[RMDB]
RNA sequence: GGGAACGACUCGAGUAGAGUCGAAAAGACGCUGAUGCGAUCGACUGUAAGAUAGAUAAAAUGAGCAGACAGAUACGUACGGCAAGUAUCGUCGCCAGAAGUACAGUCGCAAAUUGCCGUACGAAGAAUCGUCGGACGAGUUCGCUCGUCCGACGAUAAAAGAAACAACAACAACAAC
Reactivity to 2A3 in 0.01 (KOAc 150mM, MgCl2 10mM, bicine 150mM(pH8.5), 24C), signal-to-noise 1, nucleotides 027 to 126: g100a010c050g040c110u300g040a050u280g000c040g030a010u070c000g000a040c000u000g000u000a000a000g060a270u300a060g030a070u240a230a080a000a150u180g000a000g070c130a050g000a000c040a000g060a030u000a000c000g000u000a000c000g020g000c000a000a000g000u000a000u130c060g000u000c000g080c000c000a030g030a000a000g080u030a000c000a000g000u070c000g120c070a020a080a080u300u000g000c000c000g010u000a000c070g000a040a030g150a000